Chemical mapping of a 177-nucleotide RNA with 2A3. As a SHAPE reagent, 2A3 marks flexible, mostly unpaired nucleotides at the ribose 2'-OH. For 2A3, 941 sequencing reads were counted. It was measured as part of the RMDB library 15KREP. Reactivities are given for positions 27 through 126.

RNA sequence: GGGAACGACUCGAGUAGAGUCGAAAAUAUGCUACAUUCUAUUUUACUAAUGAGCCUGCAUUUAUUAUGCAUGUUUCUUGGUACAUUAUGUUCGGGCCUAUCGUUCCCAUAUGGAUGACCUGCGUCUCCUAAUGGAAACCUUCGGGUUUCCAUUAGGAAAAGAAACAACAACAACAAC
Reactivity to 2A3 in 0.01 (KOAc 150mM, MgCl2 10mM, bicine 150mM(pH8.5), 24C), signal-to-noise 1, nucleotides 027 to 126: u050a010u030g000c010u080a170c010a070u030u070c010u090a130u070u120u030u040a010c010u040a000a000u100g020a020g000c000c020u020g000c030a020u020u070u110a270u260u070a010u090g020c000a000u030g020u010u140u000c000u000u000g040g000u010a040c030a060u000u050a050u260g030u050u010c040g050g020g000c020c000u020a010u050c000g020u000u000c000c000c010a020u090a050u040g080g000a010u030g030a050c000c030u040g020c040g060u000c010u000